[RMDB]
RNA sequence: GGGAACGACUCGAGUAGAGUCGAAAAGAAAGAACCAUUCUAUGAUGAAUUGUCCUUAGCGGAUUCCGAUGAACCUGAUGUUAAUUUGGUUCUCUGAGAACAUGCUAUGACAUGUCUGAAAUAAUAAGCCCCUUACGUUAUUCGUAACGUAAGGGGCAAAAGAAACAACAACAACAAC
Reactivity to DMS in 0.01 (KOAc 150mM, MgCl2 10mM, bicine 150mM(pH8.5), 24C), signal-to-noise 1, nucleotides 027 to 126: g010a100a070a120g030a250a300c010c040a100u030u000c080u000a020u010g000a170u000g010a070a120u010u000g000u010c020c130u000u000a000g000c000g000g000a190u000u000c000c030g000a070u020g000a010a000c010c000u000g000a020u000g020u020u060a060a050u000u000u010g000g000u020u000c000u000c030u000g060a160g020a050a010c070a100u000g010c030u000a020u000g000a020c020a020u000g000u000c020u000g000a090a130a060u000a040a070u010a150a170
Reactivity to 2A3 in 0.01 (KOAc 150mM, MgCl2 10mM, bicine 150mM(pH8.5), 24C), signal-to-noise 3, nucleotides 027 to 126: g110a010a090a020g040a020a020c030c010a040u070u020c080u160a160u150g050a000u040g030a040a140u090u080g000u000c030c100u000u000a000g010c040g020g150a110u000u020c010c020g070a040u190g020a020a020c030c040u070g010a000u090g150u300u300a230a060u170u070u040g030g000u000u000c000u010c010u020g170a150g010a170a000c000a040u100g000c010u070a010u070g000a000c000a010u100g030u000c040u080g030a080a010a020u130a090a000u090a110a110
Chemical mapping of a 177-nucleotide RNA with DMS and 2A3. DMS adducts were read by reverse transcription with MarathonRT. Values cover nucleotides 27 to 126. For 2A3 the reverse transcriptase was SuperScript II with manganese.